Structure probing data (DMS and 2A3) for a 177-nucleotide construct. The reactions ran in a buffer of 150 mM KOAc, 10 mM MgCl2 and 150 mM bicine (pH 8.5), at 24 C. 2A3 adducts were read by reverse transcription with SuperScript II with manganese. DMS adducts were read by reverse transcription with MarathonRT. Values cover nucleotides 27 to 126.
[RMDB]
RNA sequence: GGGAACGACUCGAGUAGAGUCGAAAACACUCACCUGCUCUGCUCGCUCAUUCAUGGCUUUCCUGUGCUCUGCCAUUGCUCAGGUGAGUGAGCAGUUCGCCCGGCACAUUGACCAGCAGAUCCAGGGGUGCUUAUAACUUUUCGAAGUUAUAAGCACAAAAGAAACAACAACAACAAC
Reactivity to DMS in 0.01 (KOAc 150mM, MgCl2 10mM, bicine 150mM(pH8.5), 24C), signal-to-noise 3, nucleotides 027 to 126: c110a100c060u000c040a070c040c020u000g000c110u000c010u000g000c010u000c020g010c100u000c030a030u000u010c080a090u000g000g000c030u000u000u000c050c040u000g020u010g000c060u000c070u010g000c030c050a050u000u000g020c250u010c120a110g010g010u000g000a020g010u000g010a010g010c010a030g010u000u000c100g000c020c010c030g010g000c060a060c070a070u010u000g010a090c040c030a090g010c040a060g000a070u000c040c020a060g000g010g000
Reactivity to 2A3 in 0.01 (KOAc 150mM, MgCl2 10mM, bicine 150mM(pH8.5), 24C), signal-to-noise 5, nucleotides 027 to 126: c030a010c010u050c020a060c000c020u020g000c020u000c000u040g000c000u010c020g020c010u010c010a060u200u080c040a060u100g070g000c020u070u080u070c020c040u090g050u090g050c020u040c050u130g030c020c010a070u050u140g030c030u050c120a030g010g010u010g020a010g010u000g000a000g010c010a000g000u050u050c040g030c000c020c000g030g020c030a020c010a120u050u120g050a090c010c010a000g020c010a010g020a070u030c020c010a020g030g020g030